[RMDB]
RNA sequence: GGGAACGACUCGAGUAGAGUCGAAAACUGCUGGUGGGGCUCGCGCUGUACUUCACCACCUCCGUGCUGUGCGCGCUGUCCGGCGACGUCUACGCGCUGACCGCGCUGCGCUUCCUGCAGGGCUUCGGCGCGGCGGCGGGAAUGGUGAUCGCCCGCGCGAGUCAGACCUAUUCGUAGGUCUGACUCGAAAAGAAACAACAACAACAAC
Reactivity to 2A3 in 0.01 (KOAc 150mM, MgCl2 10mM, bicine 150mM(pH8.5), 24C), signal-to-noise 1, nucleotides 027 to 156: c020u070g030c010u090g050g020u050g010g040g020g020c020u030c050g040c010g000c030u080g020u090a060c010u040u040c000a070c060c010a070c020c050u070c030c010g010u000g020c040u080g020u030g030c020g000c040g000c030u020g040u090c050c070g000g010c000g010a030c000g040u050c000u060a020c020g060c000g010c100u000g040a300c000c040g000c000g000c010u010g000c030g000c000u190u140c040c120u170g050c090a040g000g060g000c000u190u210c020g020g010c010g000c000g020g000c000g000g000c020g020g030g030a060a050u170g020g010u000g050a190u040c000g000c000c000c000g040c010g010